[RMDB]
An RNA of 207 nucleotides, treated with 2A3 and DMS and read out base by base. The reactions ran in a buffer of 150 mM KOAc, 10 mM MgCl2 and 150 mM bicine (pH 8.5), at 24 C. In probing experiments dimethyl sulfate is read out at A N1 and C N3, which are open when not base-paired.

RNA sequence: GGGAACGACUCGAGUAGAGUCGAAAACUCGCUCAAACAUACAGAGAUGUUGUGCGAUAUGAAUCUCUCUGCAUUAGAAUGGUCGAAGAAUCAGCGGCCAUUCGAGACCUAAUUAGAAGCCGCAUUAACAGCUUUGGAACACGCCUUGCUGACGUGACCAUAGGAUAUACUUCGGUAUAUCCUAUGGAAAAGAAACAACAACAACAAC
Reactivity to 2A3 in 0.01 (KOAc 150mM, MgCl2 10mM, bicine 150mM(pH8.5), 24C), signal-to-noise 7, nucleotides 027 to 156: c020u010c010g000c010u050c040a120a070a050c020a030u190a070c060a060g090a010g010a070u010g000u030u010g010u000g000c010g010a010u020a080u240g180a170a140u040c050u020c000u000c040u130g040c040a090u050u080a040g010a020a010u010g000g000u010c010g010a100a040g070a200a200u110c070a040g060c010g000g000c000c000a000u000u000c000g000a000g000a020c010c020u080a160a080u120u100a080g040a090a010g040c040c030g050c100a050u160u140a080a050c010a030g030c010u070u100u100g040g030a060a020c020a010c040g010c010c010u060u090g000c050u040g030a020c020g030u020g030a040
Reactivity to DMS in 0.01 (KOAc 150mM, MgCl2 10mM, bicine 150mM(pH8.5), 24C), signal-to-noise 4, nucleotides 027 to 156: c050u000c060g030c060u000c040a110a090a120c090a150u000a110c020a070g020a070g010a020u000g020u000u010g020u000g000c040g000a120u020a080u000g000a080a150u010c070u000c050u000c020u010g020c050a090u000u000a130g000a030a030u000g010g020u000c010g010a130a140g010a120a170u010c130a170g020c020g030g030c010c010a040u000u000c020g000a170g010a060c030c040u000a070a110u010u000a140g000a100a120g030c090c000g000c030a110u000u010a060a060c030a060g000c020u000u000u000g010g010a100a160c020a040c010g000c020c010u000u020g020c120u000g000a060c020g010u000g000a260